RNA sequence: GGGAACGACUCGAGUAGAGUCGAAAAAAAGGUUUGCCGAUUAAUGUCAUUGCUAUGGUCAUAGACAUCAGGGUGUGAAGUGUUCAGACAAGUUUGGGUUGCACAUUAAGGGGGCUGGACAGAGGUACACUGAACGGGUAUUCGUACCCGUUCAGUGAAAAGAAACAACAACAACAAC
Reactivity to DMS in 0.01 (KOAc 150mM, MgCl2 10mM, bicine 150mM(pH8.5), 24C), signal-to-noise 2, nucleotides 027 to 126: a020a060a010g030g000u010u000u000g020c040c050g000a130u020u000a110a010u000g020u000c030a190u000u000g040c020u000a040u010g020g010u000c030a060u010a130g010a040c040a060u000c070a060g010g000g000u000g000u010g010a050a110g010u010g000u000u000c060a050g020a100c060a060a080g020u000u020u000g020g000g000u000u000g020c090a060c100a040u000u010a120a080g010g010g000g010g020c050u000g020g010a020c120a080g010a060g000g030u000a140
This 177-nucleotide RNA was probed chemically with DMS.
It was measured as part of the RMDB library OK2TRN.
For DMS, 1,858 sequencing reads were counted.
For DMS the reverse transcriptase was MarathonRT.